[RMDB]
RNA sequence: GGGAACGACUCGAGUAGAGUCGAAAACCACAAAAGGUGUUAGUUCAUUAAGACAGCAGGACGGUGGCCAUGGAAGUCGGCAUCCGCUAAGGAGUGUGUAACAACUCACCUGCCAAAUGGACUAGCCGGGCUGCAAGACAUUCGUGUCUUGCAGCCCAAAAGAAACAACAACAACAAC
Reactivity to 2A3 in 0.01 (KOAc 150mM, MgCl2 10mM, bicine 150mM(pH8.5), 24C), signal-to-noise 1, nucleotides 027 to 126: c020c000a090c090a050a090a020a020g160g030u060g040u120u020a000g000u000u000c010a030u000u040a060a150g060a270c110a050g020c000a000g000g000a010c000g030g040u010g110g000c000c000a020u000g040g000a010a010g000u010c010g000g000c000a000u000c000c000g000c000u010a000a000g000g000a000g000u020g010u020g000u000a000a010c000a000a000c000u000c000a000c000c000u000g000c000c010a000a060a000u000g000g000a000c000u000a000g000c010c010
Conditions: 150 mM KOAc, 10 mM MgCl2 and 150 mM bicine (pH 8.5), 24 C. The record gives the reactivity of an RNA of 177 nucleotides to 2A3. The 2A3 profile rests on 1,076 reads.